[RMDB]
Conditions: 150 mM KOAc, 10 mM MgCl2 and 150 mM bicine (pH 8.5), 24 C. Chemical mapping of a 177-nucleotide RNA with DMS. Reactivities are rounded to 0.1 and cut off at 0 and 3. For DMS the reverse transcriptase was MarathonRT.

RNA sequence: GGGAACGACUCGAGUAGAGUCGAAAAGAUAUGGAUCAGCUGGAGCUCGAGGUCGGAAACGACCUCAGAGCGUUGAAAGCUGAGUCCUAAGUCAAAACUCGUAGCUCAGUUCGCUGAGCUACGAGAACCGUAAAGACAACUUCGGUUGUCUUUACGGAAAAGAAACAACAACAACAAC
Reactivity to DMS in 0.01 (KOAc 150mM, MgCl2 10mM, bicine 150mM(pH8.5), 24C), signal-to-noise 1, nucleotides 027 to 126: g010a000u010a000u010g000g000a180u000c000a010g020c000u000g000g020a050g020c000u000c000g000a010g010g010u000c000g020g000a010a010a000c000g000a010c000c000u000c000a000g000a000g020c000g030u000u010g000a060a190a100g000c000u010g000a010g010u010c000c000u010a000a110g000u000c010a100a040a140a130c010u000c000g020u000a000g000c000u000c000a000g010u000u010c280g040c010u010g000a010g000c010u000a000c010g000a000g000a010a090